The record gives the reactivity of an RNA of 177 nucleotides to 2A3 and DMS. It was measured as part of the RMDB library OK2TST. The reactions ran in a buffer of 150 mM KOAc, 10 mM MgCl2 and 150 mM bicine (pH 8.5), at 24 C. For DMS, 2,414 sequencing reads were counted.
[RMDB]
RNA sequence: GGGAACGACUCGAGUAGAGUCGAAAAUCGAGGCGUUGCGGCGCAAGGGCGACGAGCCGAACGUGAAGCCGGUGAGCGCGUGAUCACGGUCUAUACGAAGCCGGAUUGCCCCAUGUGCGACCGAACAGAUUAGCAGGCAAUUCGUUGCCUGCUAAUCAAAAGAAACAACAACAACAAC
Reactivity to 2A3 in 0.01 (KOAc 150mM, MgCl2 10mM, bicine 150mM(pH8.5), 24C), signal-to-noise 2, nucleotides 027 to 126: u090c000g010a030g010g010c080g010u040u080g000c000g060g000c000g000c020a020a010g030g020g000c030g010a090c020g020a030g020c030c000g040a110a020c010g010u030g060a040a000g000c030c040g040g090u100g040a050g000c170g010c080g110u200g040a040u060c020a000c040g010g040u000c020u040a080u010a160c000g020a020a000g030c000c030g000g030a070u010u130g020c010c000c000c050a080u180g040u030g060c010g070a210c020c000g030a040a010c060a040
Reactivity to DMS in 0.01 (KOAc 150mM, MgCl2 10mM, bicine 150mM(pH8.5), 24C), signal-to-noise 3, nucleotides 027 to 126: u010c020g010a080g010g010c050g030u000u000g000c090g010g000c000g020c020a050a120g020g010g010c030g020a060c080g010a200g020c020c030g000a100a080c030g010u010g000a150a250g030c010c000g030g000u000g010a040g030c060g000c200g000u000g020a050u000c010a060c030g000g000u010c040u000a260u000a050c070g030a130a200g010c070c010g010g000a140u000u000g000c050c010c030c170a120u010g000u020g010c000g010a160c020c020g040a080a070c140a150